[RMDB]
This 207-nucleotide RNA was probed chemically with 2A3. Source: RMDB library RNAMAK, as collected in RNAgym.

RNA sequence: GGGAACGACUCGAGUAGAGUCGAAAAGCUACUUCCGGUUCGCCGGAAGUAGCGCAAAACCUUUGUGAGCAAUGAGCAACAGCAGAGCCCAUUGGGCUCCUGACAUGCUCGAUGCUCACUCUGGUAACUCUUUUAUACGUAUUCGUACGUAUAAAAAGAGACAACGUAGAUUCGUCUACGUUGUCUCAAAAGAAACAACAACAACAAC
Reactivity to 2A3 in 0.01 (KOAc 150mM, MgCl2 10mM, bicine 150mM(pH8.5), 24C), signal-to-noise 3, nucleotides 027 to 156: g000c000u010a000c000u000u000c010c000g020g060u080u100c300g010c000c000g000g000a010a000g000u000a000g000c000g000c000a080a090a010a010c000c000u000u020u000g000u000g010a010g000c020a050a060u140g010a010g000c000a010a300c010a110g070c080a050g000a000g000c060c000c070a300u160u300g000g000g010c020u040c000c010u000g050a070c010a240u030g010c000u010c000g030a030u040g000c000u000c000a000c010u000c000u000g000g030u030a080a090c030u040c000u120u040u010u010a000u000a000c000g000u010a020u010u080c160g020u100a010c000g000u000a000u000a000a030a010a000a020